[RMDB]
RNA sequence: GGGAACGACUCGAGUAGAGUCGAAAAAUUGGUACGGUAAUAUGUAUGUCGCCUGAAUCAAUGUAGUGCGAUUUCUAUCAUACGAGUUUAAAUGAAGCUAUCUCGGCUCCGUGGGGAGGCAACUACGCGCUAUUUCCUGAUUCGUCAGGAAAUAGCGAAAAGAAACAACAACAACAAC
Reactivity to 2A3 in 0.01 (KOAc 150mM, MgCl2 10mM, bicine 150mM(pH8.5), 24C), signal-to-noise 4, nucleotides 027 to 126: a000u070u130g100g000u030a050c030g000g020u050a130a020u090a090u300g190u100a060u130g070u040c010g020c010c010u030g090a030a050u100c120a050a060u120g110u120a050g030u040g060c020g000a010u010u100u010c080u050a070u010c050a030u040a080c020g030a020g030u060u040u190a110a170a120u260g030a080a020g030c000u050a040u140c020u060c070g000g020c000u010c060c010g020u030g000g050g000g010a030g000g010c010a020a040c010u030a020c040g050
Reactivity to DMS in 0.01 (KOAc 150mM, MgCl2 10mM, bicine 150mM(pH8.5), 24C), signal-to-noise 2, nucleotides 027 to 126: a040u020u000g000g000u020a040c070g010g000u000a050a110u060a060u050g040u040a030u030g010u040c010g030c010c010u000g020a040a090u030c220a050a090u040g020u010a080g010u000g000c070g010a040u010u070u000c030u000a070u040c020a040u000a040c030g000a030g030u010u000u000a010a130a140u020g000a100a070g010c040u000a100u000c020u000c060g000g000c030u020c000c060g030u050g000g000g000g000a060g020g000c160a010a050c030u000a040c100g000
This 177-nucleotide RNA was probed chemically with 2A3 and DMS. Reactivities are given for positions 27 through 126. The 2A3 profile rests on 2,284 reads. It was measured as part of the RMDB library OK1LIB.